The data come from the RNA Mapping Database (RMDB), library M2RFOK. Structure probing data (2A3) for a 207-nucleotide construct. 2A3 adducts were read by reverse transcription with SuperScript II with manganese. Conditions: 150 mM KOAc, 10 mM MgCl2 and 150 mM bicine (pH 8.5), 24 C. The 2A3 profile rests on 918 reads.
[RMDB]
RNA sequence: GGGAACGACUCGAGUAGAGUCGAAAAACAGAAAAAAGGAGUUUAAAUUAGAUUUGCAAACGGACGGUACUAAGUACCGUCACUUUUACGUCUAACUUAUCGUUAACUCUGCAAAAAGAAAACAAGAAAAACAAGCGUGAGUUCGCUCACGCUUGAACCUCGAAGAUUAGUUCGCUAAUCUUCGAGGAAAAGAAACAACAACAACAAC
Reactivity to 2A3 in 0.01 (KOAc 150mM, MgCl2 10mM, bicine 150mM(pH8.5), 24C), signal-to-noise 1, nucleotides 027 to 156: a000c070a020g080a010a060a030a040a000a050g050g000a050g000u120u140u180a020a040a040u070u010a010g000a020u140u110u300g040c060a030a040a020c040g000g010a000c000g000g000u010a000c030u170a190a110g020u020a010c000c000g000u000c000a000c000u000u010u030u030a030c030g020u030c000u020a000a070c020u040u110a010u130c010g090u000u010a010a000c010u030c050u050g000c040a020a130a030a050a000g130a000a090a020a000c050a040a060g080a170a060a000a000a010c000a000a000g000c000g010u000g000a000g010u010u040c080g060c150u000c030a000c000g000c000u000u000g000a000a000